About this RNA
An RNA of 177 nucleotides, treated with DMS and read out base by base. DMS adducts were read by reverse transcription with MarathonRT.
RNA sequence: GGGAACGACUCGAGUAGAGUCGAAAAUCGGGGUUGUGUCUGUAGCAGGCUCUCUUGGGCAGCAGGGGUCAGGAGCACGGAGGGCAGACCCAAGACGGACCAGGCAUCUCUGGGGAGGCGACAUCCCAUCGCUGAUAGGAUUCGUCCUAUCAGCGAUAAAAGAAACAACAACAACAAC
Reactivity to DMS in 0.01 (KOAc 150mM, MgCl2 10mM, bicine 150mM(pH8.5), 24C), signal-to-noise 2, nucleotides 027 to 126: u010c070g010g000g000g010u000u000g000u000g000u000c060u010g000u000a090g000c090a140g030g000c040u010c010u000c080u000u000g010g010g040c050a100g010c090a130g010g000g000g020u010c050a060g010g010a130g020c090a060c110g020g010a120g000g020g000c050a070g000a100c030c030c020a090a060g000a100c120g020g010a080c040c040a050g000g010c100a070u010c060u010c040u010g000g000g000g000a090g030g020c030g010a080c120a110u000c000c010c010
Description:
Reactivities are rounded to 0.1 and cut off at 0 and 3.